[RMDB]
RNA sequence: GGGAACGACUCGAGUAGAGUCGAAAAGUAUGGAGCAGCAGCGACUCCAGUUGCAGAAAUACAACCAGCGACGGCUUGAGUAUAACGAUAUGAUUGCCCACAGCCAGCCAUUAAUGACAGCGCUUGGAAAAGCAAUUGAUGCUGGCGAUCAGGAGGAUAAUGGCCCAUUAUUCGUAAUGGGCCAUUAAAAAGAAACAACAACAACAAC
Reactivity to 2A3 in 0.01 (KOAc 150mM, MgCl2 10mM, bicine 150mM(pH8.5), 24C), signal-to-noise 1, nucleotides 027 to 156: g050u040a050u070g000g030a010g020c030a000g030c000a000g070c040g100a020c000u030c080c040a010g000u000u010g030c050a040g150a150a030a020u070a040c010a120a030c040c000a040g020c040g050a050c070g100g020c040u010u060g000a010g010u040a050u070a260a080c090g020a050u000a050u180g070a080u060u120g050c000c000c080a020c010a020g000c020c000a020g030c080c050a000u040u060a070a060u060g180a020c080a110g170c110g000c130u070u040g130g000a060a220a000a000g000c000a010a000u020u030g040a060u020g000c000u000g030g020c000g000a070u050c030a010g040g000a020g020g010a010
Reactivity to DMS in 0.01 (KOAc 150mM, MgCl2 10mM, bicine 150mM(pH8.5), 24C), signal-to-noise 1, nucleotides 027 to 156: g030u000a140u000g030g000a170g000c020a140g040c020a130g020c070g080a130c000u000c020c020a120g000u000u000g030c010a090g000a110a110a080u010a040c000a140a090c070c040a180g000c060g000a130c050g040g040c050u000u010g000a120g000u010a080u000a110a140c120g020a100u000a070u010g020a120u020u010g010c010c000c020a110c110a240g000c010c010a090g000c080c040a080u020u000a030a080u000g000a130c030a110g000c190g000c110u010u000g010g000a130a080a080a000g070c000a100a110u000u030g030a090u000g020c060u000g030g000c000g010a090u000c030a170g020g000a130g010g020a200